[RMDB]
RNA sequence: GGGAACGACUCGAGUAGAGUCGAAAAGAUAUGGACCCAGCAGAGUCUAGUAUUGCUCAACAGCCCACGGACUCGGAAACGAGUUUGGGACAUGAGCAAUACUAGACUCUGCGUGGGUCCUAAGUCACACGACAAAAGAGUUCGCUCUUUUGUCGUGAAAAGAAACAACAACAACAAC
Reactivity to DMS in 0.01 (KOAc 150mM, MgCl2 10mM, bicine 150mM(pH8.5), 24C), signal-to-noise 1, nucleotides 027 to 126: g000a080u000a300u000g000g000a030c000c000c010a090g000c000a010g000a010g010u010c000u000a000g000u000a000u010u000g000c020u000c000a040a110c230a280g020c010c000c010a160c300g030g000a010c010u010c000g010g000a180a120a230c000g030a010g010u000u000u000g000g000g010a000c040a120u000g030a010g000c030a010a000u000a000c000u010a000g000a010c000u000c010u000g050c030g030u010g000g000g000u000c000c010u010a000a040g000u010c010a200
Structure probing data (DMS) for a 177-nucleotide construct. DMS adducts were read by reverse transcription with MarathonRT.